RNA sequence: GGGAACGACUCGAGUAGAGUCGAAAAAACAAAACAUACCAGACUAUGCUCAUAGAUCAGCUAAACAGAAUGCUCGCUUCUGUCUCUAAAAACGCAGUACCAAUGGUUCAGGCUAUGGCUGCUCUGGAAUGAUACCCACUUUCGAGUGGGUAUCAUUAAAAGAAACAACAACAACAAC
Reactivity to DMS in 0.01 (KOAc 150mM, MgCl2 10mM, bicine 150mM(pH8.5), 24C), signal-to-noise 2, nucleotides 027 to 126: a050a040c090a040a060a090a050c110a130u000a210c020c020a030g020a040c050u000a050u010g000c020u000c020a020u000a020g020a060u010c040a050g020c020u020a050a080a030c060a060g010a060a070u010g030c040u000c070g020c170u010u000c020u000g000u000c080u000c060u000a020a050a030a050a040c170g030c080a060g040u010a090c090c040a050a070u000g000g000u000u000c050a090g010g000c010u010a050u000g000g040c000u000g010c150u000c040u010g010g010
Reactivity to 2A3 in 0.01 (KOAc 150mM, MgCl2 10mM, bicine 150mM(pH8.5), 24C), signal-to-noise 2, nucleotides 027 to 126: a000a000c090a020a070a020a010c070a080u190a050c000c000a010g030a000c040u040a050u160g020c000u020c140a040u050a050g040a160u070c040a000g040c020u060a110a040a000c030a010g100a130a020u050g000c000u000c050g060c010u080u000c000u080g140u000c010u040c010u100a150a160a070a040a030c070g000c030a010g050u040a030c030c000a100a070u080g030g000u060u100c040a020g010g060c030u030a010u010g020g030c020u000g000c010u000c000u030g020g040